Record summary:
This 207-nucleotide RNA was probed chemically with 2A3 and DMS. The RNA was probed in 150 mM KOAc, 10 mM MgCl2 and 150 mM bicine (pH 8.5) at 24 C. For 2A3 the reverse transcriptase was SuperScript II with manganese. Values are in units of 0.01, from 0 to 300, in steps of 10. The 2A3 profile rests on 3,869 reads. For DMS, 2,251 sequencing reads were counted.
RNA sequence: GGGAACGACUCGAGUAGAGUCGAAAAGGCGUAGCCGACAACAUGCCAAGGUAGCCCAGACCUUCAAGGCUACGGUGCGUUGCGACGCACGGUCUGAUUCUUCACAACGACGUUCACCGCGUCUUCUACAACCGGCAAAGAUUCGUCUUUGCCGGAAGCUAUGAUCCAGUUUCGACUGGAUCAUAGCAAAAGAAACAACAACAACAAC
Reactivity to 2A3 in 0.01 (KOAc 150mM, MgCl2 10mM, bicine 150mM(pH8.5), 24C), signal-to-noise 5, nucleotides 027 to 156: g060g020c070g050u080a020g050c070c040g090a030c020a100a030c010a040u130g060c040c020a050a050g060g010u030a020g020c000c020c050a020g020a070c010c020u070u070c050a040a030g000g000c000u010a000c010g000g000u010g000c000g000u000u090g090c150g120a020c010g000c000a000c010g000g010u000c000u010g040a100u170u030c070u130u120c110a080c020a220a060c130g010a000c000g050u200u230c110a080c120c040g030c020g020u010c060u030u040c030u100a100c050a140a060c010c000g000g010c000a000a000a000g010a030u060u120c170g040u010c100u000u000u000g000c000c000g010g000a000a000
Reactivity to DMS in 0.01 (KOAc 150mM, MgCl2 10mM, bicine 150mM(pH8.5), 24C), signal-to-noise 1, nucleotides 027 to 156: g000g000c060g070u000a040g050c020c020g050a180c060a050a100c050a010u010g010c000c000a170a100g040g020u000a020g000c020c000c050a140g020a230c040c050u000u060c100a180a140g000g010c000u010a000c000g020g020u000g000c000g030u000u010g020c150g070a190c050g000c000a100c030g010g000u000c030u000g000a250u000u000c050u010u010c030a010c000a110a170c030g000a090c030g010u010u010c050a050c020c010g020c040g000u000c050u000u010c020u000a110c150a090a250c000c000g030g090c010a000a020a000g000a050u030u030c260g000u000c000u000u000u000g000c000c000g020g010a000a040